[RMDB]
RNA sequence: GGGAACGACUCGAGUAGAGUCGAAAAUCAACAACAACUUUUACAGAAGGAACUUAGCAAUCCCUUCAACAGUUGGGAUUACGAAGUUUUACAAAGGAUGGGAUGAUCUUAUGUGCUCAUUGCCGGAGAUAGUGGGAAGCUUCGGCUUCCCACUAUCAAAAGAAACAACAACAACAAC
Reactivity to DMS in 0.01 (KOAc 150mM, MgCl2 10mM, bicine 150mM(pH8.5), 24C), signal-to-noise 1, nucleotides 027 to 126: u000c000a070a060c100a010a060c020a050a100c060u000u050u000u000a220c220a040g000a170a120g020g000a020a010c000u000u000a190g040c050a000a020u000c000c000c000u000u000c020a150a140c270a160g020u000u010g000g000g000a060u000u000a010c000g000a070a040g020u000u000u000u000a030c200a040a000a020g000g020a250u000g010g000g030a050u000g000a050u010c040u000u010a210u010g030u010g040c040u000c050a060u000u000g000c040c020g000g010a280
Reactivity to 2A3 in 0.01 (KOAc 150mM, MgCl2 10mM, bicine 150mM(pH8.5), 24C), signal-to-noise 1, nucleotides 027 to 126: u010c000a000a110c020a000a020c000a000a000c020u070u210u240u300a100c070a030g060a090a120g140g000a000a000c020u020u000a010g000c000a010a000u000c020c010c000u020u020c060a250a250c040a100g000u020u030g030g010g040a020u020u020a000c000g010a030a000g000u000u000u000u050a050c080a010a130a030g150g020a020u070g000g060g000a000u010g050a000u030c050u110u290a280u300g120u170g030c000u000c030a000u060u110g200c000c000g060g010a080
Background
An RNA of 177 nucleotides, treated with DMS and 2A3 and read out base by base. The RNA was probed in 150 mM KOAc, 10 mM MgCl2 and 150 mM bicine (pH 8.5) at 24 C. Source: RMDB library OK2TRN, as collected in RNAgym. 2A3 is a SHAPE reagent: it acylates the 2'-hydroxyl of flexible nucleotides of all four kinds.